The record gives the reactivity of an RNA of 177 nucleotides to DMS and 2A3. DMS (dimethyl sulfate) methylates the pairing face of unpaired adenines and cytosines. The data come from the RNA Mapping Database (RMDB), library OK1LIB. The DMS profile rests on 50,462 reads. 2A3 adducts were read by reverse transcription with SuperScript II with manganese. For 2A3, 38,795 sequencing reads were counted.
RNA sequence: GGGAACGACUCGAGUAGAGUCGAAAAAUUGGGCCUCGCGAAGGUACGCAUAGUAUCCUGUGGACACCGACUCUUCUAUUGUGUCGACGAGCCGAGCUUGAGCAGAGAAGAUGAGAGGCUUGUCAGCGACGAUAAUACUAUUCGUAGUAUUAUCGUCAAAAGAAACAACAACAACAAC
Reactivity to DMS in 0.01 (KOAc 150mM, MgCl2 10mM, bicine 150mM(pH8.5), 24C), signal-to-noise 9, nucleotides 027 to 126: a100u030u030g010g000g000c000c010u010c020g010c100g010a120a090g010g000u000a020c040g010c170a080u020a100g010u010a050u030c030c020u010g010u010g000g010a070c050a070c080c030g000a110c040u000c010u000u000c030u010a080u030u010g010u010g000u010c050g000a090c130g000a070g010c040c100g000a120g010c030u010u000g000a140g010c050a080g000a060g000a030a040g000a070u020g000a090g000a130g000g000c020u010u010g000u000c050a110g010c240
Reactivity to 2A3 in 0.01 (KOAc 150mM, MgCl2 10mM, bicine 150mM(pH8.5), 24C), signal-to-noise 9, nucleotides 027 to 126: a000u120u110g050g030g020c010c010u040c020g040c060g070a080a030g030g010u030a040c020g010c080a120u070a190g040u060a080u120c010c030u060g030u070g070g010a010c010a020c050c010g060a050c020u010c010u130u010c030u070a180u130u220g050u030g050u100c030g010a040c020g010a010g010c020c030g020a040g030c020u080u100g040a030g030c090a020g070a020g030a200a040g030a030u160g050a050g010a030g070g000c000u010u040g050u020c040a030g040c030